[RMDB]
RNA sequence: GGGAACGACUCGAGUAGAGUCGAAAAUCAUGCUAUCACCAGCUAACUGUGUCACCUACAGUUAGUGGUGAGCGAGAGUUCACCUAGUGUCAUUGUAGGUGACGAUGACGCUAUGGUGAUAGCAUGCCUAGUCCAUACAAUUCGUUGUAUGGACUAGAAAAGAAACAACAACAACAAC
Reactivity to 2A3 in 0.01 (KOAc 150mM, MgCl2 10mM, bicine 150mM(pH8.5), 24C), signal-to-noise 7, nucleotides 027 to 126: u110c000a000u000g000c000u000a000u000c000a000c000c000a000g000c000u000a020a020c010u020g010u010g100u130c040a020c020c030u050a000c000a000g000u010u010a010g010u010g010g000u000g000a000g000c010g010a080g000a000g000u000u000c000a000c000c000u000a000g020u000g020u030c010a000u000u010g030u030a110g000g240u090g000a010c000g000a000u000g000a000c010g000c000u010a000u040g000g010u000g000a000u000a000g000c000a000u000g000c000
Reactivity to DMS in 0.01 (KOAc 150mM, MgCl2 10mM, bicine 150mM(pH8.5), 24C), signal-to-noise 9, nucleotides 027 to 126: u020c010a000u000g000c000u000a000u000c000a010c000c000a010g000c010u000a040a070c040u000g000u000g000u010c250a020c240c130u010a080c000a010g010u000u000a020g010u000g010g010u000g000a000g010c000g000a230g000a200g000u000u000c000a000c000c000u000a020g010u000g000u000c040a020u000u000g010u000a120g010g010u000g010a100c010g000a010u000g000a070c060g010c000u000a000u000g020g010u000g000a000u000a000g000c000a000u000g000c270
Source information: This 177-nucleotide RNA was probed chemically with 2A3 and DMS. For 2A3 the reverse transcriptase was SuperScript II with manganese. For 2A3, 110,962 sequencing reads were counted. DMS adducts were read by reverse transcription with MarathonRT.